[RMDB]
RNA sequence: GGGAACGACUCGAGUAGAGUCGAAAAGUGAUUGGACGAAUGCAAACGAUAUUGUCUAUGAUCAAUAGAUCAGAUGACAAGUUUCCAGAAAAGGAAACUGAGUAUCUCCUCCAAGUAUACAAAGUAGCACCUAGGCACACUUCGGUGUGCCUAGGUGAAAAGAAACAACAACAACAAC
Reactivity to 2A3 in 0.01 (KOAc 150mM, MgCl2 10mM, bicine 150mM(pH8.5), 24C), signal-to-noise 1, nucleotides 027 to 126: g120u080g130a130u100u010g000g000a030c130g040a010a000u020g010c000a000a080a040c040g030a040u060a120u120u130g000u000c000u000a000u050g000a000u000c020a100a280u000a300g010a000u020c000a000g000a020u160g000a020c000a000a020g000u000u000u000c000c000a030g270a110a140a050a000g030g000a000a000a000c000u020g000a010g000u000a020u030c140u000c000c000u000c000c000a010a010g020u020a200u020a090c020a090a150a000g070u040a030g100
Reactivity to DMS in 0.01 (KOAc 150mM, MgCl2 10mM, bicine 150mM(pH8.5), 24C), signal-to-noise 1, nucleotides 027 to 126: g070u040g000a000u000u000g000g000a020c270g090a000a000u000g000c040a070a200a230c150g030a160u010a080u000u000g000u000c000u000a220u000g000a050u000c000a180a050u160a020g000a000u000c000a000g010a120u040g000a000c000a110a090g000u000u000u000c000c000a100g010a100a230a150a070g000g000a000a000a000c000u030g000a170g000u000a000u000c040u000c020c190u000c030c060a010a000g000u020a120u010a070c060a120a070a040g030u020a060g000